[RMDB]
RNA sequence: GGGAACGACUCGAGUAGAGUCGAAAAGCUAAAGACUUCGGUCUUUAGCAAAUAAAUUCAGGUGAUUUGCUACCUAUAAGUGCAGCUAGAAAUUCAAAAAUAAAACAACGAGGUUCGCCUCGUUGAAUCUUACCGGUAUGUUCGCAUACCGGUAAGAAAAAGAAACAACAACAACAAC
Reactivity to DMS in 0.01 (KOAc 150mM, MgCl2 10mM, bicine 150mM(pH8.5), 24C), signal-to-noise 1, nucleotides 027 to 126: g000c000u000a030a000a000g020a000c010u000u020c080g040g010u000c000u000u000u000a000g010c010a010a100a030u000a000a070a090u010u000c080a000g000g000u010g000a110u000u000u000g020c000u000a010c030c000u000a190u000a010a050g000u010g000c000a020g020c300u000a070g010a070a080a070u010u010c140a020a160a080a060a070u030a070a050a130a220c000a000a000c000g010a020g000g000u020u020c270g010c020c000u000c010g040u000u000g000a060a070
Reactivity to 2A3 in 0.01 (KOAc 150mM, MgCl2 10mM, bicine 150mM(pH8.5), 24C), signal-to-noise 1, nucleotides 027 to 126: g010c000u000a000a010a000g000a000c000u000u040c220g000g000u000c000u000u000u010a010g000c000a000a010a000u060a010a010a020u100u050c040a020g000g000u010g100a270u010u120u060g000c010u010a010c020c010u160a100u110a300a010g030u020g020c010a000g000c010u100a100g160a130a170a080u140u100c120a080a100a030a050a130u170a050a120a030a040c000a000a000c000g000a010g010g020u030u080c170g140c010c020u000c000g000u040u010g000a000a000